[RMDB]
RNA sequence: GGGAACGACUCGAGUAGAGUCGAAAACUAUCGUUCGUUCGCGAACGAUAGAAAGGUGCUCGGUGAAACCGAGCAUCCAAUACUAAAGAAACUUUACUGGCUUAGUACUGGGACCCCAUUUUUAGUAUAAAAAGUUUUGUCUCUUCGGAGACAAAACGAGUCAUUGCAUGUUCGCAUGCAAUGACUCAAAAGAAACAACAACAACAAC
Reactivity to 2A3 in 0.01 (KOAc 150mM, MgCl2 10mM, bicine 150mM(pH8.5), 24C), signal-to-noise 1, nucleotides 027 to 156: c000u000a000u010c000g000u000u000c000g000u020u020c230g020c010g180a000a000c000g000a000u000a020g000a060a030a000g010g000u000g000c000u000c020g040g030u140g170a210a120a110c010c000g000a000g000c000a000u010c000c000a010a030u000a010c040u040a000a090a100g070a190a130a030c030u170u150u060a040c050u070g070g090c050u040u070a010g020u050a060c000u030g050g000g040a100c020c000c000c030a030u000u060u140u150u080a020g020u000a020u130a190a110a040a030a010g000u000u020u000u000g000u000c000u010c000u010u030c160g090g000a000g000a000c010a000a000a000a000c000